[RMDB]
RNA sequence: GGGAACGACUCGAGUAGAGUCGAAAAGAUAUGGAAAGGUGAAGACAGGUGGAUUGGAGCCUCCGCAUCGGAAACGAUGCCGGAGGCUAUGAAGAUCGUAACAUCCUGUCUUCACCUUUCCUAAGUCCAGAAUACAGUAGUUCGCUACUGUAUUCUGAAAAGAAACAACAACAACAAC
Reactivity to DMS in 0.01 (KOAc 150mM, MgCl2 10mM, bicine 150mM(pH8.5), 24C), signal-to-noise 4, nucleotides 027 to 126: g010a100u010a300u000g000g000a010a010a010g000g020u000g000a030a000g010a030c000a010g000g030u000g010g010a020u000u000g000g000a030g010c000c000u010c000c000g030c000a000u010c000g020g000a170a110a240c000g000a010u000g000c130c080g040g000a020g000g010c000u000a010u000g000a140a260g000a000u010c020g010u000a010a100c190a040u010c010c000u000g010u000c000u000u000c010a000c000c000u000u000u010c000c000u000a010a100g000u000c040